[RMDB]
RNA sequence: GGGAACGACUCGAGUAGAGUCGAAAAUACAGGUACAAUGCGAGAUUGGUAUCUAUCUCAAACUACCGGUGUUCUCCGUACAGGACCUAUUCAAAAUCGACCAGAUUCUACUUUUACUGCUGCUACAUCCUGCUAAUUUAUUCGUAAAUUAGCAGGAAAAAGAAACAACAACAACAAC
Reactivity to 2A3 in 0.01 (KOAc 150mM, MgCl2 10mM, bicine 150mM(pH8.5), 24C), signal-to-noise 4, nucleotides 027 to 126: u080a010c020a010g030g000u040a030c080a090a110u060g040c020g020a030g020a030u030u060g080g050u220a130u140c030u030a010u000c010u010c000a030a050a030c020u020a010c000c000g010g000u010g010u010u020c040u020c010c020g050u110a080c030a080g020g050a040c000c020u030a070u050u100c060a030a050a030a150u040c030g070a080c050c000a020g010a110u040u020c030u080a100c030u020u090u070u090a070c030u040g090c020u020g020c010u040a040c020a090
Reactivity to DMS in 0.01 (KOAc 150mM, MgCl2 10mM, bicine 150mM(pH8.5), 24C), signal-to-noise 8, nucleotides 027 to 126: u000a050c060a080g000g020u000a020c090a080a170u000g010c300g000a030g010a030u000u010g020g020u010a070u010c060u010a060u000c010u000c020a060a240a100c160u000a020c010c010g010g020u000g000u000u000c050u000c020c100g020u000a070c140a100g000g010a060c060c040u000a050u000u000c070a040a060a090a100u000c030g000a080c050c050a090g010a060u000u000c020u000a050c040u000u000u000u000a070c070u000g010c040u010g000c060u000a060c140a140
This 177-nucleotide RNA was probed chemically with 2A3 and DMS.
Reactivities are given for positions 27 through 126.
For 2A3 the reverse transcriptase was SuperScript II with manganese.